[RMDB]
RNA sequence: GGGAACGACUCGAGUAGAGUCGAAAAUAACAUCGUAGUGUAAGACGAAAAGUCAACGUCGCUUGCCAGCAGGACCACCAAAGGAAUACGCUUCCGUAACUACUCGAGAUCCCAAGCGAUAACACAAUCAAGUAUCAGCAUUCGUGCUGAUACUUGAAAAAGAAACAACAACAACAAC
Reactivity to 2A3 in 0.01 (KOAc 150mM, MgCl2 10mM, bicine 150mM(pH8.5), 24C), signal-to-noise 2, nucleotides 027 to 126: u050a010a000c010a050u060c060g070u050a090g040u010g030u100a070a060g030a020c020g070a090a040a070a020g040u060c040a020a020c010g050u020c010g000c040u020u050g030c010c030a010g020c040a020g000g040a030c010c030a020c050c000a080a040a030g040g030a070a040u050a060c080g000c090u020u010c010c000g020u040a070a030c010u000a000c000u000c000g000a010g000a020u000c000c000c000a000a000g030c020g080a060u090a190a050c080a020c020a130a080
Reactivity to DMS in 0.01 (KOAc 150mM, MgCl2 10mM, bicine 150mM(pH8.5), 24C), signal-to-noise 3, nucleotides 027 to 126: u000a110a090c200a060u000c070g000u000a070g030u000g020u000a050a130g010a050c000g000a060a050a090a130g000u020c070a080a130c150g010u000c030g000c030u000u000g010c040c050a060g000c050a050g000g000a050c020c060a050c040c080a030a070a130g000g000a100a040u000a060c130g000c080u000u030c040c010g000u000a130a090c000u000a000c000u010c000g010a030g000a110u000c030c010c000a060a070g010c150g000a060u000a020a030c110a070c140a070a100